[RMDB]
RNA sequence: GGGAACGACUCGAGUAGAGUCGAAAACGCAGAGGGUUCUGAUAACAAAGAACCUAGAUAGCCGCAUCGGUACUAUAGGAUGUAGUCGGUGAGCCGGAAUGCCUGCAUCGUAAGCCUAUAAGUAAAUUUAAGUGUAAUCACUUCGGUGAUUACACAAGCAGUAACAAACCUUCGGGUUUGUUACUGCAAAAGAAACAACAACAACAAC
Reactivity to 2A3 in 0.01 (KOAc 150mM, MgCl2 10mM, bicine 150mM(pH8.5), 24C), signal-to-noise 2, nucleotides 027 to 156: c070g020c010a060g020a090g040g000g010u010u000c020u080g140a180u060a270a090c060a040a140a000g010a000a000c010c000u000a010g030a060u080a010g020c030c010g100c050a050u060c080g000g050u030a010c010u020a010u120a090g070g000a050u070g010u100a030g070u070c020g010g000u030g050a020g030c030c000g080g080a100a010u080g020c000c000u010g040c020a010u020c020g050u040a050a050g000c000c050u080a070u030a140a040g050u080a050a140a240u110u200u110a110a050g000u000g000u000a000a000u000c000a000c000u040u050c110g070g000u000g010a000u000u010a000c000a000c000a000a000
The record gives the reactivity of an RNA of 207 nucleotides to 2A3. For 2A3, 843 sequencing reads were counted. It was measured as part of the RMDB library M2RFPK. The reactions ran in a buffer of 150 mM KOAc, 10 mM MgCl2 and 150 mM bicine (pH 8.5), at 24 C.